[RMDB]
RNA sequence: GGGAACGACUCGAGUAGAGUCGAAAAGAUAUGGACAAUAAAGUUCUCAUCUUCAUCAGCAACAGCUGGCCAUCGGAAACGAUGGACCAGACAUGCUGAUGAAGAUGAGAACUUGUUGUCCUAAGUCCACAUCCCUUGAGUUCGCUCAAGGGAUGUGAAAAGAAACAACAACAACAAC
Reactivity to DMS in 0.01 (KOAc 150mM, MgCl2 10mM, bicine 150mM(pH8.5), 24C), signal-to-noise 2, nucleotides 027 to 126: g020a140u010a300u010g010g000a020c010a000a020u000a030a000a020g000u000u000c000u000c000a000u000c000u010u010c000a010u010c000a040g010c000a080a110c300a300g000c020u000g010g000c000c020a000u000c000g000g030a180a060a300c010g000a040u000g000g000a090c000c000a000g010a040c200a180u010g000c000u000g010a010u000g000a000a000g000a000u000g000a020g000a010a000c000u000u000g010u000u000g000u000c000c000u010a020a120g000u000c020

This 177-nucleotide RNA was probed chemically with DMS. Source: RMDB library TTRINS, as collected in RNAgym. For DMS, 1,425 sequencing reads were counted. The RNA was probed in 150 mM KOAc, 10 mM MgCl2 and 150 mM bicine (pH 8.5) at 24 C. For DMS the reverse transcriptase was MarathonRT.